[RMDB]
RNA sequence: GGGAACGACUCGAGUAGAGUCGAAAAACUAACGCAAUAGACGAACGCCUUAAUGCCAUUUAUGCAAGAUUUCAUUGAGUGGCUUGCAUAUUAAACUACGUCUCGUGUAUCAUGAAACAUACACACCCGUAGGAUAAUUAUUCGUAAUUAUCCUACGAAAAGAAACAACAACAACAAC
Reactivity to 2A3 in 0.01 (KOAc 150mM, MgCl2 10mM, bicine 150mM(pH8.5), 24C), signal-to-noise 9, nucleotides 027 to 126: a000c080u110a080a010c060g030c060a070a130u070a130g030a020c020g030a100a030c050g080c020c020u120u160a110a020u130g040c040c020a080u030u040u020a000u010g000c000a010a020g020a090u090u180u150c060a070u120u300g140a070g160u080g020g000c000u000u000g000c000a000u010a030u020u140a060a090a050c070u130a030c030g040u010c030u030c080g010u010g010u020a020u030c040a050u160g140a080a060a040c040a020u050a010c010a000c000a020c020c030
Reactivity to DMS in 0.01 (KOAc 150mM, MgCl2 10mM, bicine 150mM(pH8.5), 24C), signal-to-noise 7, nucleotides 027 to 126: a080c070u010a070a040c170g010c080a090a090u020a060g000a040c040g000a140a090c140g010c030c070u000u030a090a060u020g010c030c100a080u030u010u010a000u000g000c000a000a000g000a040u010u010u030c040a070u040u030g020a150g030u010g000g000c010u000u000g000c000a000u000a000u010u020a050a090a120c140u020a060c070g000u010c030u000c200g010u000g010u000a010u000c090a070u020g020a120a100a100c240a030u010a030c020a010c030a120c140c160